[RMDB]
RNA sequence: GGGAACGACUCGAGUAGAGUCGAAAAGUUCAGUAUCGCACGGUUGCCCCAGUGAGAGAAGGCUCCGGUGGAUUGCUCUAUUAGUUUGGGCUGUGUAAUGGUUGCGCGCUGAGGGUAUAACCAUUGGCUAAAUAUAAAUUUUCGAAUUUAUAUUUAGAAAAGAAACAACAACAACAAC
Reactivity to DMS in 0.01 (KOAc 150mM, MgCl2 10mM, bicine 150mM(pH8.5), 24C), signal-to-noise 5, nucleotides 027 to 126: g010u030u010c040a110g010u010a050u030c060g000c060a090c110g010g010u010u010g010c020c010c010c020a090g000u010g010a150g020a120g010a140a140g010g000c020u000c030c010g010g020u030g000g000a060u010u010g000c040u000c010u010a040u010u010a030g010u010u010u000g010g000g000c010u000g000u000g000u010a040a080u020g000g020u020u010g010c060g000c080g010c030u010g000a110g010g000g010u010a050u040a060a050c020c020a100u020u020g010g010
Reactivity to 2A3 in 0.01 (KOAc 150mM, MgCl2 10mM, bicine 150mM(pH8.5), 24C), signal-to-noise 4, nucleotides 027 to 126: g030u050u080c030a010g050u080a120u200c080g060c090a090c050g030g050u090u130g040c010c010c020c010a040g020u070g070a190g010a030g040a090a090g060g010c000u020c030c020g040g010u040g030g050a050u040u060g000c000u000c000u010a100u100u070a040g090u020u120u050g010g000g000c000u000g010u010g010u040a000a050u050g060g010u060u090g000c040g000c000g000c010u000g020a080g030g010g020u040a040u070a140a010c000c020a050u050u060g050g000